RNA sequence: GGGAACGACUCGAGUAGAGUCGAAAAACUACAGACCAGCCAGAGAUGUGCCUACUUGUACAGCAGGGGCAAGUCUAUUAUGGGGGACAACCCACUGUUUUCUGACUGGAUUUGAGGCCUGCUCAACACGAGGCAAUUCCUGUCUGACACUGUACUACGUGGACCUUUUAUUCGUAAAAGGUCCACGAAAAGAAACAACAACAACAAC
Reactivity to 2A3 in 0.01 (KOAc 150mM, MgCl2 10mM, bicine 150mM(pH8.5), 24C), signal-to-noise 1, nucleotides 027 to 156: a000c010u030a000c000a000g000a080c040c000a010g000c010c010a030g050a030g050a140u150g060u110g190c020c040u280a300c050u120u030g000u040a080c020a070g020c030a030g000g010g020g000c000a020a000g010u000c030u040a030u290u060a120u230g010g020g050g000g060a040c050a040a230c010c080c010a090c080u030g030u010u070u070u070c100u110g090a080c030u010g020g030a050u030u000u070g070a090g040g300c000c000u000g000c000u000c040a030a000c000a000c070g020a030g000g000c000a000a030u100u020c010c000u010g000u010c000u000g010a010c090a010c120u030g010u020a000c050u040a030